[RMDB]
RNA sequence: GGGAACGACUCGAGUAGAGUCGAAAAUCUCGGAAUGAGAAAGGAGACAGGUGGAAGAAAAAGGGGUGGGCCCCCCGAUCCGAGGGGCCCGACGCCCGGAUCUGGAGAGCACUCCCGGCCGUAUGGUAGAGUGACGACUUCGGUCGUCACAAAAGAAACAACAACAACAAC
Reactivity to DMS in 0.01 (KOAc 150mM, MgCl2 10mM, bicine 150mM(pH8.5), 24C), signal-to-noise 3, nucleotides 027 to 129: u030c020u000c050g010g020a030a010u060g020a050g010a020a050a070g000g000a000g010a080c140a030g040g010u030g000g000a090a070g010a030a040a070a200a120g000g000g040g100u020g000g020g100c030c020c010c060c020c020g020a080u060c220c030g060a080g040g010g010g010c000c020c040g000a000c070g020c060c030c010g060g000a080u050c070u000g010g030a050g020a130g030c130a160c070u030c070c030c000g050g000c040c040g000u040a020u050g020g030u020a030g010a130
Reactivity to 2A3 in 0.01 (KOAc 150mM, MgCl2 10mM, bicine 150mM(pH8.5), 24C), signal-to-noise 2, nucleotides 027 to 129: u010c000u010c000g020g140a070a040u130g000a000g060a020a070a040g030g000a040g010a040c020a010g070g040u040g050g050a060a020g030a010a040a050a020a000g000g000g020g010u070g000g000g000c000c000c030c000c020c030g060a200u070c080c020g000a040g000g000g000g000c000c000c000g010a000c000g070c010c010c010g020g000a000u000c010u040g040g050a050g000a000g050c000a020c040u010c000c000c000g010g000c060c030g100u130a080u130g040g040u050a050g020a080